[RMDB]
RNA sequence: GGGAACGACUCGAGUAGAGUCGAAAAAACAUCACCUGGGGAAAAACGAAGUUAUGAAUGCAUUGAUGAGUUAGAGAUUGGCACAUCAACCAUUGCUGGUUACACACUCAAAAAUCAUGAUACAUUGAGAAUGGGUACAGUUCGCUGUACCCAUUCUAAAAGAAACAACAACAACAAC
Reactivity to DMS in 0.01 (KOAc 150mM, MgCl2 10mM, bicine 150mM(pH8.5), 24C), signal-to-noise 1, nucleotides 027 to 126: a050a080c050a080u020c030a080c000c000u010g040g020g000g000a010a050a010a110a080c170g020a090a120g020u010u000a080u000g010a030a090u010g000c100a000u000u000g020a230u010g000a090g000u010u010a040g020a110g010a040u000u000g000g020c080a040c160a080u020c060a060a050c180c070a080u000u000g000c110u030g040g010u000u000a130c110a070c070a010c010u020c050a010a020a050a040a160u010c020a070u000g000a050u010a000c100a090u000u000g000